An RNA of 207 nucleotides, treated with 2A3 and DMS and read out base by base. For DMS, 3,987 sequencing reads were counted. Reactivities are given for positions 27 through 156. Conditions: 150 mM KOAc, 10 mM MgCl2 and 150 mM bicine (pH 8.5), 24 C. For 2A3 the reverse transcriptase was SuperScript II with manganese. The data come from the RNA Mapping Database (RMDB), library M2RFOK. For 2A3, 3,553 sequencing reads were counted.
RNA sequence: GGGAACGACUCGAGUAGAGUCGAAAACAUCUUUCCUCCCUACACAGUGACUCCAGCUUGGGAGGGGCAGGGCUAGGCUGAGCCAGCACUCCCUGUGGUGUCUGCCUGCCACGUGCAGCUCGGGAGUAAAACCUGGAGAAGUUCGCUUCUCCAGGAACUUAAAUGCCAUGUUCGCAUGGCAUUUAAGAAAAGAAACAACAACAACAAC
Reactivity to 2A3 in 0.01 (KOAc 150mM, MgCl2 10mM, bicine 150mM(pH8.5), 24C), signal-to-noise 5, nucleotides 027 to 156: c030a070u090c070u060u100u040c010c020u050c000c010c020u160a080c170a050c050a140g110u070g110a020c000u010c010c010a080g040c140u120u100g030g020g000a020g010g000g040g000c040a130g020g010g060c030u180a050g080g100c060u090g070a010g050c010c010a010g000c010a010c010u030c010c000c010u030g010u010g040g000u020g030u010c010u030g050c000c000u010g020c010c010a200c180g100u220g010c010a000g010c030u060c080g020g010g000a000g010u020a010a040a000a020c000c000u000g000g000a000g000a000a000g010u040u170c250g000c120u000u000c000u000c000c000a000g000g000a000a000
Reactivity to DMS in 0.01 (KOAc 150mM, MgCl2 10mM, bicine 150mM(pH8.5), 24C), signal-to-noise 1, nucleotides 027 to 156: c100a100u000c060u020u000u000c060c000u000c000c010c010u000a100c020a040c090a130g020u020g010a050c010u000c010c010a100g030c070u000u000g000g010g020a050g020g020g040g020c040a070g010g020g030c020u000a090g030g010c060u000g000a230g010c010c020a030g020c030a070c010u000c010c010c010u010g000u010g050g010u000g030u000c010u000g000c060c030u010g010c000c010a060c070g000u000g020c010a110g000c040u000c120g040g060g000a060g040u010a040a080a130a130c000c000u020g000g010a040g010a030a010g030u000u010c300g000c010u000u000c000u000c000c000a000g010g000a010a040